RNA sequence: GGGAACGACUCGAGUAGAGUCGAAAACUACAAGCCACGCAACAGAUUCCUGAGUUACCUAAGGAAGCCGUAGAGCCAACCAUUAGUACAGGUCUGGAAGCAAUUGGUCGAGGACAAGACCUUGAUAAGCUGGAGCGGUGUGUCACUGCGUGGGCUGGCUAGCAGUUACGUUCGCGUAACUGCUAGCAAAAGAAACAACAACAACAAC
Reactivity to 2A3 in 0.01 (KOAc 150mM, MgCl2 10mM, bicine 150mM(pH8.5), 24C), signal-to-noise 1, nucleotides 027 to 156: c050u130a060c020a020a010g000c000c000a000c010g010c000a030a000c010a050g130a070u010u110c000c000u030g000a030g170u170u130a110c020c050u080a010a000g010g000a010a000g050c000c050g070u140a020g000a050g250c000c010a030a060c020c020a110u060u150a090g000u150a050c050a030g040g000u020c140u040g030g070a020a020g030c040a000a160u050u110g040g000u040c020g020a040g170g100a010c060a060a010g010a000c000c000u010u070g040a050u080a170a000g050c130u100g020g060a080g020c000g000g090u030g000u070g000u060c010a020c070u010g000c000g040u020g000g070g000c000u010g000

Structure probing data (2A3) for a 207-nucleotide construct. It was measured as part of the RMDB library OK3TST.